[RMDB]
RNA sequence: GGGAACGACUCGAGUAGAGUCGAAAACAAAAGAAAGGAAAAAGAGGCGCGAAGGACGAAAGACUCGUCGUCGACGAAGGGUUCUUUCGUUCGCAAGGCUCCCUGCCGAGCUCGGGGCUGGAGCUUGGAUGUUAAAACGGUUCGCCGUUUUAACAUCAAAAGAAACAACAACAACAAC
Reactivity to DMS in 0.01 (KOAc 150mM, MgCl2 10mM, bicine 150mM(pH8.5), 24C), signal-to-noise 2, nucleotides 027 to 126: c040a090a030a090a060g000a070a070a120g010g020a030a020a040a050a080g010a050g000g030c050g050c180g040a100a200g020g000a010c000g010a010a010a010g000a040c010u000c010g010u000c010g010u000c240g010a090c060g000a020a020g000g000g000u000u020c010u000u000u000c000g010u000u010c030g030c130a050a190g010g010c000u000c020c000c070u000g010c030c030g010a070g030c070u000c050g010g010g010g000c090u000g000g010a020g000c040u010u010g000
Reactivity to 2A3 in 0.01 (KOAc 150mM, MgCl2 10mM, bicine 150mM(pH8.5), 24C), signal-to-noise 2, nucleotides 027 to 126: c020a020a100a010a020g180a080a060a040g090g030a030a110a050a020a000g100a040g080g010c070g000c040g200a080a040g000g000a000c010g000a000a000a010g000a010c000u000c010g040u010c010g090u160c140g100a170c040g010a030a040g070g020g000u280u050c000u000u010u000c000g000u010u000c010g000c020a000a010g060g000c000u020c000c000c010u020g020c010c030g010a020g050c040u030c010g020g000g030g030c060u060g040g010a000g000c010u050u010g060
An RNA of 177 nucleotides, treated with DMS and 2A3 and read out base by base. For DMS, 1,694 sequencing reads were counted. It was measured as part of the RMDB library VIROID. The reactions ran in a buffer of 150 mM KOAc, 10 mM MgCl2 and 150 mM bicine (pH 8.5), at 24 C.